This 177-nucleotide RNA was probed chemically with 2A3 and DMS. The RNA was probed in 150 mM KOAc, 10 mM MgCl2 and 150 mM bicine (pH 8.5) at 24 C. As a SHAPE reagent, 2A3 marks flexible, mostly unpaired nucleotides at the ribose 2'-OH.
RNA sequence: GGGAACGACUCGAGUAGAGUCGAAAAUCUAACUCAUUCGUGAGUUAGAGUGAGCGCAGCGACCAUUGGGCCGGUGGCGCCCUGUCGGUGCCGCGCGUGGCGAUAGUGCUUGCUUCGGCAAGCACAAAGUUUAUUUUAGCUUCGGCUAAAAUAAACUAAAAGAAACAACAACAACAAC
Reactivity to 2A3 in 0.01 (KOAc 150mM, MgCl2 10mM, bicine 150mM(pH8.5), 24C), signal-to-noise 3, nucleotides 027 to 126: u000c000u010a000a000c010u000c000a040u070u060c180g090u030g040a010g010u000u000a000g000a000g020u090g070a060g010c010g020c020a050g000c050g140a040c000c010a060u070u130g010g000g030c030c050g300g090u200g130g090c140g010c000c000c000u040g070u060c140g030g050u030g030c080c010g000c000g000c020g010u030g080g050c080g060a090u120a160g000u010g020c000u000u000g000c000u040u030c160g110g010c000a000a000g000c000a000c000a010a000
Reactivity to DMS in 0.01 (KOAc 150mM, MgCl2 10mM, bicine 150mM(pH8.5), 24C), signal-to-noise 5, nucleotides 027 to 126: u000c000u000a000a000c000u000c000a030u000u010c180g010u000g010a020g010u000u000a000g000a030g000u000g000a190g010c010g030c000a050g000c010g000a040c010c040a130u000u000g010g010g020c000c030g030g030u010g010g010c130g010c000c000c010u000g010u010c130g030g010u000g010c030c020g010c020g000c020g010u000g010g010c140g010a140u010a100g010u000g000c000u000u000g000c000u000u010c180g020g010c000a000a010g010c000a000c010a010a030